[RMDB]
RNA sequence: GGGAACGACUCGAGUAGAGUCGAAAAACUAGUAUGUACAGGGGUGAGUUGACCUGUCAUCUAGACUGCUGACCAUCAACUCACCGGUCAGCUGGAUGAUGUCCACAGAGGACGACAUCAGUACUCAGUGUAUUGUCUAGUUCGCUGGACGAUACACAAAAGAAACAACAACAACAAC
Reactivity to DMS in 0.01 (KOAc 150mM, MgCl2 10mM, bicine 150mM(pH8.5), 24C), signal-to-noise 9, nucleotides 027 to 126: a140c010u000a010g000u050a010u000g000u050a010c000a010g000g000g010g010u010g000a100g020u000u000g000a070c020c020u000g000u000c000a010u000c010u000a010g010a200c050u000g000c010u000g000a010c010c060a160u020c120a050a060c110u010c090a070c170c120g000g000u000c000a010g000c000u000g000g000a040u000g000a060u010g000u000c000c030a150c260a120g010a160g010g000a050c060g000a040c020a000u000c010a090g010u020a080c040u010c040a220
Reactivity to 2A3 in 0.01 (KOAc 150mM, MgCl2 10mM, bicine 150mM(pH8.5), 24C), signal-to-noise 9, nucleotides 027 to 126: a000c000u010a010g040u110a050u030g060u070a010c000a010g020g030g020g060u120g080a140g040u050u060g100a070c000c010u000g000u000c000a000u000c000u010a010g060a090c040u040g000c000u000g000a000c010c010a040u110c040a040a100c060u030c090a060c030c050g000g010u010c000a000g000c010u020g060g000a020u030g000a010u040g010u000c010c010a050c070a100g180a070g060g010a010c020g010a010c000a010u010c020a010g070u070a060c030u020c060a020
The data come from the RNA Mapping Database (RMDB), library OK1LIB. The record gives the reactivity of an RNA of 177 nucleotides to DMS and 2A3. The reactions ran in a buffer of 150 mM KOAc, 10 mM MgCl2 and 150 mM bicine (pH 8.5), at 24 C. For 2A3 the reverse transcriptase was SuperScript II with manganese. The DMS profile rests on 94,733 reads.